[RMDB]
RNA sequence: GGGAACGACUCGAGUAGAGUCGAAAAGACGGUGCCUGGUUCGAAUCCCGGAGUCGCGACCCGGGCGUGGUCUUAUUUAAUGGACCGCGUCUCUUCUGGUUCUCCCACACUCGUGCGAGCAAUCCACGAACGGCUGUGGCGCGCUAGGCAAUGGAGGCUACAUUACGAAGUUCGCUUCGUAAUGUAGAAAAGAAACAACAACAACAAC
Reactivity to 2A3 in 0.01 (KOAc 150mM, MgCl2 10mM, bicine 150mM(pH8.5), 24C), signal-to-noise 4, nucleotides 027 to 156: g070a010c040g040g050u040g030c000c010u040g000g030u070u100c050g030a040a080u020c020c000c000g020g010a030g010u080c030g000c010g030a050c010c010c000g010g000g000c010g000u010g000g000u010c000u040u110a190u240u300u210a210a100u190g000g000a000c000c000g000c000g000u010c010u000c000u100u040c040u080g060g000u060u030c020u000c010c030c000a010c000a010c000u040c020g000u010g040c130g020a030g030c080a030a090u020c010c010a010c020g020a100a030c100g070g010c090u050g020u040g030g000c010g000c010g000c030u040a030g020g000c000a020a050u160g010g010a030g060g000
Reactivity to DMS in 0.01 (KOAc 150mM, MgCl2 10mM, bicine 150mM(pH8.5), 24C), signal-to-noise 2, nucleotides 027 to 156: g010a050c030g030g020u010g000c020c000u010g010g000u000u020c060g020a140a130u000c040c010c000g040g000a080g000u000c040g020c020g000a270c040c010c050g030g000g000c030g000u000g000g000u000c010u000u010a130u000u010u010a180a250u000g010g010a020c010c010g020c000g020u000c010u000c070u000u020c060u000g020g020u000u020c030u010c040c010c020a050c030a060c030u010c040g040u000g010c020g010a210g000c110a160a120u000c000c120a060c000g010a060a080c040g020g030c070u000g030u000g020g010c030g020c100g020c040u010a060g000g000c040a080a100u010g000g000a140g000g010